The data come from the RNA Mapping Database (RMDB), library TTRINS. This 177-nucleotide RNA was probed chemically with DMS.
[RMDB]
RNA sequence: GGGAACGACUCGAGUAGAGUCGAAAAGAUAUGGAAACGGCUACUGGAGCUGGGUCGUGGAGAGGAGCUCGGAAACGAGCUCUCCCCACCUCCAUCCCAGCGUUGAAAGUAGCCGUUUCCUAAGUCACUACAACAAUCAGUUCGCUGAUUGUUGUAGAAAAGAAACAACAACAACAAC
Reactivity to DMS in 0.01 (KOAc 150mM, MgCl2 10mM, bicine 150mM(pH8.5), 24C), signal-to-noise 2, nucleotides 027 to 126: g000a030u010a120u010g000g000a000a010a010c010g020g000c000u000a010c000u010g000g000a040g020c000u000g000g000g040u020c300g050u000g000g000a020g000a300g020g010a020g010c000u000c000g000g020a020a040a090c000g000a020g010c000u000c000u000c050c000c010c020a300c120c040u000c000c010a020u010c000c000c000a000g030c000g010u010u010g010a110a240a010g000u000a000g040c000c000g000u000u000u000c000c000u000a020a050g000u010c020a300
DMS (dimethyl sulfate) methylates the pairing face of unpaired adenines and cytosines.
The DMS profile rests on 2,613 reads.